[RMDB]
RNA sequence: GGGAACGACUCGAGUAGAGUCGAAAAGCACGUCCUUUACUUGGUAGGGCAUAUGGACCAGCCCGGAAUCUUUUAAAAAUGGGGAAUCUUAGUAGAUCCAGUGUGGGUCUGAGAUGCCCCCUGUCUCCAUAUUGUAGCCGUUCGCGGCUACAAUAUGAAAAGAAACAACAACAACAAC
Reactivity to 2A3 in 0.01 (KOAc 150mM, MgCl2 10mM, bicine 150mM(pH8.5), 24C), signal-to-noise 2, nucleotides 027 to 126: g040c040a020c070g080u060c010c020u060u080u130a130c080u150u130g160g020u190a060g000g070g020c060a030u100a060u160g080g010a000c010c060a050g000c000c020c020g000g050a040a050u090c050u140u270u160u220a050a070a050a070a100u080g000g000g000g000a000a010u000c000u090u040a140g080u050a040g300a020u010c000c060a060g030u190g120u120g290g010g020u030c000u010g000a000g010a010u040g020c000c000c000c000c000u000g030u060c000u030c020
Reactivity to DMS in 0.01 (KOAc 150mM, MgCl2 10mM, bicine 150mM(pH8.5), 24C), signal-to-noise 3, nucleotides 027 to 126: g030c150a110c120g000u000c030c000u000u010u000a050c060u000u000g010g020u010a090g030g000g040c020a070u000a030u000g010g000a080c060c130a140g000c020c010c000g010g000a110a090u010c020u000u010u010u000a020a050a050a080a060u020g010g010g020g010a300a010u000c000u020u010a120g010u020a040g000a000u010c000c010a240g040u010g030u000g030g020g010u000c000u000g000a020g000a010u000g010c090c000c000c010c060u000g000u000c060u000c120